An RNA of 177 nucleotides, treated with 2A3 and DMS and read out base by base. The reactions ran in a buffer of 150 mM KOAc, 10 mM MgCl2 and 150 mM bicine (pH 8.5), at 24 C. 2A3 adducts were read by reverse transcription with SuperScript II with manganese. Values are in units of 0.01, from 0 to 300, in steps of 10.

[RMDB]
RNA sequence: GGGAACGACUCGAGUAGAGUCGAAAACCCACGUGGUUCGCCACGUGGGAAAUAAAUUCAGCGGUAAUUCGAGGCCAAAUAUUACCGCUGAUGGCCUCGUAAAAAGUACACAGUUCGCUGUGUACAAGUUAAACAAAACCUUCGGGUUUUGUUUAACAAAAGAAACAACAACAACAAC
Reactivity to 2A3 in 0.01 (KOAc 150mM, MgCl2 10mM, bicine 150mM(pH8.5), 24C), signal-to-noise 3, nucleotides 027 to 126: c000c000c000a000c000g000u010g020g050u050u080c190g050c060c000a000c000g000u020g010g010g000a030a070a000u090a010a090a010u060u020c010a000g020c000g020g000u030a010a020u060u110c090g090a080g130g070c070c040a030a090a020u240a040u060u030a040c000c000g000c010u010g010a000u000g000g030c000c000u030c020g030u050a030a090a030a060a030g000u010a000c000a000c000a000g000u080u090c170g060c120u000g000u000g000u010a000c000a000a010
Reactivity to DMS in 0.01 (KOAc 150mM, MgCl2 10mM, bicine 150mM(pH8.5), 24C), signal-to-noise 3, nucleotides 027 to 126: c010c000c000a000c010g040u000g000g000u000u010c220g010c020c000a000c000g040u010g020g000g000a000a020a030u000a060a100a060u010u000c010a010g010c000g000g000u000a010a020u000u000c140g000a130g010g000c120c080a050a100a070u000a050u000u000a010c000c000g010c000u000g000a000u000g010g020c010c000u010c230g000u000a030a030a060a110a080g000u000a000c000a010c000a010g020u000u010c220g000c010u000g010u000g000u000a000c010a020a050